[RMDB]
RNA sequence: GGGAACGACUCGAGUAGAGUCGAAAACCGGCGUUUCGACGCCGGAAAAAAGCGUACUACCCUGAGGACCUGCAAGUACGGCUCCCAAAUAGGAGCCCGUAUGAUGACCAGGUCUACCCACCAGGGUAUCGCAAAAAGGCCGGAUUCGUCCGGCCAACGUUAUAUACGCUUUCGAGCGUAUAUAACGAAAAGAAACAACAACAACAAC
Reactivity to DMS in 0.01 (KOAc 150mM, MgCl2 10mM, bicine 150mM(pH8.5), 24C), signal-to-noise 1, nucleotides 027 to 156: c020c000g000g030c000g000u010u010u000c250g060a180c000g000c000c000g020g040a010a000a010a130a070a040g010c000g000u000a080c100u000a010c000c000c000u000g020a150g000g010a040c000c000u000g030c030a050a080g020u000a040c020g000g000c000u000c000c000c000a070a160a160u010a070g050g000a040g000c070c010c060g100u010a000u010g030a180u000g010a220c300c020a000g000g000u000c000u000a010c010c000c010a300c050c010a030g030g030g030u000a000u000c000g010c030a000a040a120a140a160g030g050c000c000g060g000a090u000u000c070g010u000c000c000g010g010c020c020a010a000
Reactivity to 2A3 in 0.01 (KOAc 150mM, MgCl2 10mM, bicine 150mM(pH8.5), 24C), signal-to-noise 1, nucleotides 027 to 156: c010c000g020g000c010g000u050u090u250c210g050a010c010g010c000c000g000g010a180a000a000a000a000a000g030c020g000u050a160c000u000a000c020c000c000u000g000a070g000g010a010c000c010u000g000c030a160a110g000u000a020c020g010g010c000u000c000c020c000a230a290a040u160a120g020g000a040g040c250c050c010g040u000a010u020g100a180u080g030a060c080c040a000g010g010u000c000u010a020c010c010c030a060c040c000a000g030g020g000u010a030u080c010g000c000a100a000a000a000a100g000g000c030c000g030g020a020u080u050c110g020u040c060c000g000g000c010c000a000a010

The record gives the reactivity of an RNA of 207 nucleotides to DMS and 2A3. For 2A3 the reverse transcriptase was SuperScript II with manganese. For 2A3, 950 sequencing reads were counted. DMS adducts were read by reverse transcription with MarathonRT.